RNA sequence: GGGAACGACUCGAGUAGAGUCGAAAAUUGGCACUAAAGGUGCCAAGUCUAGAUCCACGAGUAGAUACACAUCUACCGCCGGCAAUCUAUGUCUCUGUAUAUACAGAGACUCCGGCGAGGUGAGAUCUAGAGACCAGGCACUAUAGAUUGCCUACUACAGAAGCAAUUACUUCGGUGAUUGCUUCUGAAAAGAAACAACAACAACAAC
Reactivity to 2A3 in 0.01 (KOAc 150mM, MgCl2 10mM, bicine 150mM(pH8.5), 24C), signal-to-noise 4, nucleotides 027 to 156: u100u030g010g000c010a000c010u040a030a030a150g050g000u000g000c010c000a000a010g000u000c000u000a000g000a000u000c000c000a000c010g040a040g010u000a000g000a010u070a110c140a010c020a160u000c000u000a000c010c000g000c000c000g010g000c080a080a110u070c050u150a080u170g000u000c000u000c000u000g010u020a150u010a040u050a300c000a000g000a000g000a000c000u010c000c000g000g010c000g000a030g000g020u000g010a180g000a010u000c000u000a000g010a000g000a030c000c030a010g000g000c000a000c020u040a010u030a080g070a110u050u150g000c000c000u010a030c030u030a020
Reactivity to DMS in 0.01 (KOAc 150mM, MgCl2 10mM, bicine 150mM(pH8.5), 24C), signal-to-noise 3, nucleotides 027 to 156: u010u000g010g000c000a120c020u000a050a160a140g000g020u000g060c000c000a020a020g000u000c010u000a020g010a030u000c010c020a030c000g020a200g050u000a010g000a110u000a150c280a210c150a070u000c010u000a020c000c020g010c000c000g030g010c230a090a160u010c100u010a050u000g020u000c000u000c000u010g000u000a270u010a230u000a060c010a010g010a020g000a000c010u000c000c000g030g020c000g000a120g000g000u000g010a130g010a010u000c010u010a010g000a060g010a120c090c010a100g020g010c020a050c030u000a290u000a040g000a160u020u000g020c010c000u000a040c020u000a260

An RNA of 207 nucleotides, treated with 2A3 and DMS and read out base by base.
For DMS, 5,796 sequencing reads were counted.
DMS adducts were read by reverse transcription with MarathonRT.
The data come from the RNA Mapping Database (RMDB), library OK3TST.